Structure probing data (DMS and 2A3) for a 177-nucleotide construct. The DMS profile rests on 552 reads. The data come from the RNA Mapping Database (RMDB), library M2PK50.
RNA sequence: GGGAACGACUCGAGUAGAGUCGAAAAAGCCAAUCCUUCGGGAUUGGCUACAGCAACGUAGCAAAGCAACGAGACAAGACGAGCAAAAGAUCGAGCAUGCUACACACCCCAUCUUCGGAUGGGGUAAAGUGGCUUGUAGAUUCGUCUACAAGCCACUAAAAGAAACAACAACAACAAC
Reactivity to DMS in 0.01 (KOAc 150mM, MgCl2 10mM, bicine 150mM(pH8.5), 24C), signal-to-noise 1, nucleotides 027 to 126: a140g000c030c030a020a020u000c000c030u010u030c230g060g000g090a040u000u000g000g000c000u030a000c010a060g000c080a050a090c130g000u000a000g020c020a010a140a060g040c000a080a000c100g020a100g040a160c140a060a130g020a040c100g000a030g000c110a130a110a080a060g000a050u000c030g010a240g000c010a120u000g000c000u000a000c000a160c280a060c010c000c000c000a030u010c000u000u010c270g000g030a000u000g000g000g010g000u000a000a080
Reactivity to 2A3 in 0.01 (KOAc 150mM, MgCl2 10mM, bicine 150mM(pH8.5), 24C), signal-to-noise 2, nucleotides 027 to 126: a000g020c010c010a020a000u010c010c030u010u120c250g030g000g010a000u010u000g000g010c000u000a000c000a000g020c020a010a090c080g010u020a000g000c010a090a180a000g010c010a070a260c020g020a030g050a080c030a100a050g110a120c150g090a040g120c080a020a150a020a000g100a020u020c010g000a000g000c030a020u040g000c000u020a000c010a000c010a000c030c010c000c000a000u010c010u020u020c100g110g000a000u000g000g000g000g030u000a000a010